[RMDB]
RNA sequence: GGGAACGACUCGAGUAGAGUCGAAAAUUAAAGCGCGAAAAAGAUCGAUCGAUCGUUAGAACGCGCAAGUCGAAGUUUGAUACGGGCAUACUAGCUAGCUAGCUAGCAAAACAAACUUCGUAAAAAACAUCAUGUCUCUGUUCGCAGAGACAUGAUGAAAAGAAACAACAACAACAAC
Reactivity to DMS in 0.01 (KOAc 150mM, MgCl2 10mM, bicine 150mM(pH8.5), 24C), signal-to-noise 3, nucleotides 027 to 126: u020u010a080a140a130g010c000g050c000g000a040a150a080a110a130g000a000u000c010g010a130u040c220g000a010u010c000g010u000u000a090g010a160a190c010g000c000g030c010a060a030g010u000c000g010a010a010g030u000u000u000g000a100u000a100c240g010g010g020c110a160u010a080c020u000a020g000c000u000a190g000c110u030a040g000c010u000a020g000c020a030a060a100a170c020a000a000a010c000u000u000c010g020u000a000a030a050a070a040a070
Reactivity to 2A3 in 0.01 (KOAc 150mM, MgCl2 10mM, bicine 150mM(pH8.5), 24C), signal-to-noise 2, nucleotides 027 to 126: u140u060a090a060a000g000c000g010c010g090a010a090a000a050a030g000a020u000c050g080a080u130c220g000a020u020c000g070u070u080a080g050a120a060c020g010c000g000c010a010a000g040u020c000g020a000a000g000u000u000u010g110a120u180a170c080g010g050g090c050a020u080a150c000u000a000g040c020u030a030g170c040u080a000g000c010u010a030g020c020a010a080a000a020c000a000a000a000c000u010u010c010g000u000a060a100a010a000a000a000